[RMDB]
RNA sequence: GGGAACGACUCGAGUAGAGUCGAAAAAGUUCUAGUCCUCACCUAAGAUCAGACUUACAGGGCCCUCAAAGUAAGAGCACUGGGUUGGGCUUUGUGGUGGGGAUGAGUGUCUCAUUUUUAGUCCCAAAUUAAAAACGAGAUUUUGGGCUGUACAUCACAUGACUACGUGAUUCGUCACGUAGUCAUGAAAAGAAACAACAACAACAAC
Reactivity to DMS in 0.01 (KOAc 150mM, MgCl2 10mM, bicine 150mM(pH8.5), 24C), signal-to-noise 1, nucleotides 027 to 156: a060g000u010u010c040u000a150g020u000c000c000u010c000a030c010c000u000a080a080g000a050u000c040a130g000a050c050u000u000a240c060a020g040g030g020c000c010c030u000c050a080a100a150g030u000a080a040g020a050g000c030a020c030u010g000g000g020u010u000g020g030g010c010u000u000u000g020u000g010g070u000g020g000g000g040a010u000g020a120g020u000g020u000c000u000c010a050u030u000u010u000u000a070g010u000c050c080c120a080a060a100u000u000a000a000a010a020a030c000g000a030g010a150u000u000u000u000g060g000g050c120u010g010u000a070c090a170u000c090a290
Reactivity to 2A3 in 0.01 (KOAc 150mM, MgCl2 10mM, bicine 150mM(pH8.5), 24C), signal-to-noise 2, nucleotides 027 to 156: a000g070u000u030c010u020a010g010u000c000c000u000c000a010c000c010u020a100a070g030a190u040c070a030g140a170c020u080u030a070c050a030g030g010g000c020c020c020u020c050a210a270a000g060u090a180a000g050a050g150c020a000c030u020g000g000g160u090u020g030g000g000c010u000u010u030g050u040g000g010u000g000g000g000g000a000u030g000a000g020u030g070u000c010u010c040a090u090u210u020u040u170a000g050u120c010c010c010a010a000a040u060u070a040a060a030a000a000c130g000a080g020a100u130u030u010u000g000g000g000c040u020g060u050a190c110a130u080c040a020